[RMDB]
RNA sequence: GGGAACGACUCGAGUAGAGUCGAAAAGAUAUGGAAGCUUUUGACGUCCUUGGGAUGACAUCGAUCGGAGCUCGGAAACGAGCUCCGGGAGUCAUCACUUGGACGAUAAGCUUCCUAAGUCAAAAUCAUCACAAGAUCUUCGGAUCUUGUGAUGAAACAUAACGACGUAGUUCGCUACGUCGUUAUGAAAAGAAACAACAACAACAAC
Reactivity to DMS in 0.01 (KOAc 150mM, MgCl2 10mM, bicine 150mM(pH8.5), 24C), signal-to-noise 2, nucleotides 027 to 156: g010a110u010a240u010g030g010a010a010g030c000u000u000u000u000g010a210c070g010u010c000c000u010u000g000g010g040a020u010g020a020c010a210u000c100g010a110u000c020g010g010a010g020c000u010c000g010g010a130a080a300c010g000a020g030c000u000c000c000g020g000g010a060g010u000c000a010u000c000a010c010u000u000g010g030a000c010g030a000u000a010a020g020c010u000u000c010c000u000a000a070g000u010c040a070a110a160a100u000c010a010u000c010a010c010a020a010g020a010u000c010u000u000c300g040g010a000u010c000u000u000g010u010g000a000u000g000a010a050a160
Reactivity to 2A3 in 0.01 (KOAc 150mM, MgCl2 10mM, bicine 150mM(pH8.5), 24C), signal-to-noise 7, nucleotides 027 to 156: g020a010u060a040u120g000g000a010a000g000c020u070u070u150u220g200a130c020g000u000c000c000u000u010g010g000g000a000u000g010a010c060a300u150c090g170a130u110c010g020g000a000g000c000u000c000g010g020a050a100a050c010g000a000g000c000u000c000c020g000g000g000a000g000u000c000a000u000c000a000c000u000u000g000g000a000c000g000a000u000a000a000g000c000u000u000c000c000u000a060a000g010u000c010a010a030a010a200u030c000a000u000c000a000c000a000a000g000a000u000c000u080u250c300g060g000a000u000c000u000u020g000u000g000a000u000g000a000a000a000